[RMDB]
RNA sequence: GGGAACGACUCGAGUAGAGUCGAAAAGAUUGAGCACGAGUUAAUUAGAACCACUUUGCCAAAGGCAAAAGAUUUACGUCGAUAUAUCGAACCUUUGAUUACUGUUAGUAAAUCUGAUUCAGUAGCACGUCCCCUAUCAGUUCGCUGAUAGGGGACGAAAAGAAACAACAACAACAAC
Reactivity to 2A3 in 0.01 (KOAc 150mM, MgCl2 10mM, bicine 150mM(pH8.5), 24C), signal-to-noise 1, nucleotides 027 to 126: g060a030u100u080g040a010g020c040a020c020g060a100g010u040u070a100a120u120u050a080g090a140a060c020c000a030c100u060u040u020g040c040c000a110a140a040g010g000c000a010a000a000a080g010a010u000u090u090a070c070g040u040c040g030a010u020a000u000a040u150c010g010a090a150c030c050u050u160u150g040a030u080u030a050c020u030g050u240u000a060g050u030a110a140a000u070c040u050g030a090u190u000c030a030g000u050a020g120c040a040
Reactivity to DMS in 0.01 (KOAc 150mM, MgCl2 10mM, bicine 150mM(pH8.5), 24C), signal-to-noise 1, nucleotides 027 to 126: g010a150u000u000g010a170g010c040a040c030g020a170g000u010u010a130a120u030u000a120g030a040a160c010c040a100c230u000u000u000g000c020c010a110a000a080g030g010c010a000a050a070a030g000a010u000u000u000a050c030g030u000c060g000a100u010a060u000a050u000c020g010a080a210c250c110u010u020u000g000a070u000u000a040c050u000g010u000u000a130g000u000a020a030a000u000c020u000g020a090u000u000c000a030g010u000a040g000c180a100
The record gives the reactivity of an RNA of 177 nucleotides to 2A3 and DMS. Source: RMDB library OK2TST, as collected in RNAgym. Conditions: 150 mM KOAc, 10 mM MgCl2 and 150 mM bicine (pH 8.5), 24 C.